[RMDB]
RNA sequence: GGGAACGACUCGAGUAGAGUCGAAAACUGGCUUAAGGUACGUGCUAAUCCACCGCGAAAAGCGGUCUCGUGUGAGAAGACCCGAUAAGUCGAGUCACACGGGGGCUUCUGACAGUGAUUUGUCGUGGGGCUGGUACAGUGGGGAAUGUCAGCAUACGUUGCUGGUUAAGUUCGCUUAACCAGCAACAAAAGAAACAACAACAACAAC
Reactivity to 2A3 in 0.01 (KOAc 150mM, MgCl2 10mM, bicine 150mM(pH8.5), 24C), signal-to-noise 1, nucleotides 027 to 156: c020u040g040g060c030u110u180a140a040g090g050u090a050c070g160u060g050c000u050a070a040u160c000c000a020c000c000g010c000g040a130a140a070a140g000c010g010g000u010c000u020c000g000u000g000u010g000a020g000a090a100g000a020c060c010c120g200a300u210a230a000g020u010c010g010a000g190u000c000a000c000a000c020g000g000g000g000g020c010u060u020c010u050g000a030c000a040g000u000g130a210u170u120u050g060u050c030g010u030g000g020g000g000c000u030g000g010u000a020c060a030g010u030g000g060g000g030a110a020u100g010u000c010a020g030c020a110u100a120c100